[RMDB]
RNA sequence: GGGAACGACUCGAGUAGAGUCGAAAAGUAGGCCAAUCAAAAUAGAUACUCCACCAAAAUAUGCUCUAGAAUCAACAUCCAUCCCUACAACAAACAUGUGAUGCGCUCACACAAACAUACCUAAGAUCGCAAUUAAUAUCAUUGAAUAUAUCAUUGCCCGAUAAAUAGCGUUCGCGCUAUUUAUCGGAAAAGAAACAACAACAACAAC
Reactivity to 2A3 in 0.01 (KOAc 150mM, MgCl2 10mM, bicine 150mM(pH8.5), 24C), signal-to-noise 4, nucleotides 027 to 156: g080u070a030g050g010c040c010a050a090u110c060a030a110a100a080u150a050g050a020u050a050c020u010c030c000a060c000c000a020a040a060a080u120a060u130g010c000u000c010u080a040g030a070a090u070c040a040a040c010a050u010c020c020a020u010c000c010c000u030a030c020a100a000c010a070a120a000c040a050u070g030u040g010a020u040g010c000g010c050u020c020a010c000a000c010a010a130a030c050a050u150a110c000c030u060a050a030g020a110u070c010g010c010a010a000u020u060a070a030u070a000u040c030a060u020u220g020a150a010u090a010u020a010u080c030a030u020u010g030c000
Reactivity to DMS in 0.01 (KOAc 150mM, MgCl2 10mM, bicine 150mM(pH8.5), 24C), signal-to-noise 2, nucleotides 027 to 156: g010u010a050g050g020c020c020a080a050u010c090a090a060a080a130u000a090g050a200u000a070c030u000c000c010a080c030c060a050a140a090a160u010a020u010g040c040u010c000u000a080g000a100a140u010c030a120a040c000a050u000c000c010a070u000c030c010c000u010a060c050a080a090c090a010a050a050c100a080u000g000u000g000a040u000g030c130g040c050u010c050a050c010a070c050a030a010a010c040a090u000a090c010c060u010a070a120g000a070u010c040g020c030a050a030u000u000a070a040u000a070u010c000a110u000u030g020a030a060u000a130u000a110u000c070a040u000u000g010c050